[RMDB]
RNA sequence: GGGAACGACUCGAGUAGAGUCGAAAACCACAUAUCUUCGGAUAUGUGGAAAUAAGGGAAACGGAUUAUUCCGGUCGACUGCGGAGAAACAAAGUCAAAUAAAAAGCAUCUUCUUCGGAAGAUGCAAGAUGAUGGAGAGGUUCGCCUCUCCAUCAUCAAAAGAAACAACAACAACAAC
Reactivity to DMS in 0.01 (KOAc 150mM, MgCl2 10mM, bicine 150mM(pH8.5), 24C), signal-to-noise 1, nucleotides 027 to 126: c010c000a000c040a000u000a000u000c000u000u010c250g000g000a000u000a010u000g020u000g000g000a010a040a060u000a080a090g000g000g030a120a080a130c040g020g000a070u010u000a080u000u000c020c070g010g030u000c100g060a080c060u000g070c300g010g000a060g030a100a040a120c110a040a200a020g000u000c020a080a080a260u010a010a010a130a040a030g000c000a000u000c000u000u000c000u030u000c150g050g000a040a000g000a000u000g000c020a000a010
Reactivity to 2A3 in 0.01 (KOAc 150mM, MgCl2 10mM, bicine 150mM(pH8.5), 24C), signal-to-noise 1, nucleotides 027 to 126: c000c010a000c000a000u010a000u010c010u000u050c140g060g000a000u000a000u020g000u000g000g040a010a070a040u120a080a060g210g000g010a130a100a080c040g010g010a050u090u110a070u300u050c000c000g010g040u130c100g010a020c020u030g000c030g070g040a100g210a150a130a030c000a000a040a010g000u000c030a010a100a000u200a020a140a020a010a000g000c000a000u000c000u020u000c000u020u040c150g070g010a000a010g000a000u010g000c020a000a010
Chemical mapping of a 177-nucleotide RNA with DMS and 2A3. The DMS profile rests on 734 reads. It was measured as part of the RMDB library M2PK50. For 2A3, 1,213 sequencing reads were counted.